The record gives the reactivity of an RNA of 177 nucleotides to DMS. For DMS the reverse transcriptase was MarathonRT. The reactions ran in a buffer of 150 mM KOAc, 10 mM MgCl2 and 150 mM bicine (pH 8.5), at 24 C. Source: RMDB library OK2TST, as collected in RNAgym.

RNA sequence: GGGAACGACUCGAGUAGAGUCGAAAAGACGGACCUACCACCGGCGACCGGAUACGGCUGGCCGACACCAACCUGCUGGUUGAGGUCACCGAAGACCGGUGUGGGGGACCGGGACUGGCCGGUGACGGGCCGUACCAAGUUUCGACUUGGUACGGCCAAAAGAAACAACAACAACAAC
Reactivity to DMS in 0.01 (KOAc 150mM, MgCl2 10mM, bicine 150mM(pH8.5), 24C), signal-to-noise 1, nucleotides 027 to 126: g000a080c010g020g000a220c000c000u010a130c020c030a090c000c000g020g000c010g040a070c000c020g000g000a180u010a300c000g050g080c260u000g050g000c000c020g000a300c300a050c030c000a000a060c080c040u000g140c200u000g020g010u000u010g000a300g020g000u000c000a050c010c000g020a100a150g000a100c020c010g000g040u000g000u000g030g000g000g050g010a090c000c040g000g030g010a090c030u000g000g010c020c020g000g000u000g010a120c300g010